[RMDB]
RNA sequence: GGGAACGACUCGAGUAGAGUCGAAAAGAUAUGGAGAUUCUCGCAGUGGAGACUGACAAUCGGAAACGAUUGGAGGUCGAUGAAACUGCGAGGAAUCUCCUAAGUCAAACACCGCUUCGGCGGUGAAGAUAAUCCCUGGGUUCGCCCAGGGAUUAUCAAAAGAAACAACAACAACAAC
Reactivity to DMS in 0.01 (KOAc 150mM, MgCl2 10mM, bicine 150mM(pH8.5), 24C), signal-to-noise 1, nucleotides 027 to 126: g000a000u010a300u000g000g010a000g000a030u000u000c000u000c020g010c000a010g000u000g000g010a040g020a000c000u000g010a300c000a010a000u000c000g000g000a160a130a280c040g000a030u000u000g000g000a300g000g000u000c000g000a060u030g080a160a220a050c010u000g020c000g030a010g070g070a010a000u000c000u010c000c030u000a000a110g000u010c060a090a110a240c030a000c030c000g030c000u020u010c260g030g000c000g030g060u000g000a010a050